[RMDB]
RNA sequence: GGGAACGACUCGAGUAGAGUCGAAAAGUGGGAACGAUCAUCAUCCAGAUAGGCAGCGUGUCCUUCAGGUAAGGUGUCUGGAUUCGCCAGGAACUCAUGAUGCACAAAAGACACAGUCCCAUGGUGACUAACCGGAAUGGUUCGCCAUUCCGGUUAGAAAAGAAACAACAACAACAAC
Reactivity to DMS in 0.01 (KOAc 150mM, MgCl2 10mM, bicine 150mM(pH8.5), 24C), signal-to-noise 4, nucleotides 027 to 126: g050u000g000g010g010a060a090c100g020a040u010c060a040u030c070a080u020c050c050a060g030a070u000a050g020g000c030a120g010c100g000u030g000u030c020c020u010u020c050a050g030g020u010a070a130g010g020u000g000u000c050u000g000g000a210u010u020c060g020c030c040a020g020g030a040a050c060u000c030a070u010g020a080u000g000c110a080c170a070a010a090a100g000a070c050a030c060a060g000u000c010c000c000a130u020g010g010u020g000a150
Reactivity to 2A3 in 0.01 (KOAc 150mM, MgCl2 10mM, bicine 150mM(pH8.5), 24C), signal-to-noise 3, nucleotides 027 to 126: g080u060g000g020g010a050a080c040g030a070u100c060a030u020c000a010u000c010c020a020g060a140u130a100g140g030c020a040g040c090g090u080g030u120c020c000u040u030c070a060g060g020u180a120a030g050g020u070g030u010c030u020g050g020a060u080u080c050g010c020c020a010g080g010a060a050c010u020c050a020u080g040a050u090g040c090a010c040a110a110a020a000g050a030c010a000c010a060g030u030c000c010c030a020u070g060g010u050g000a040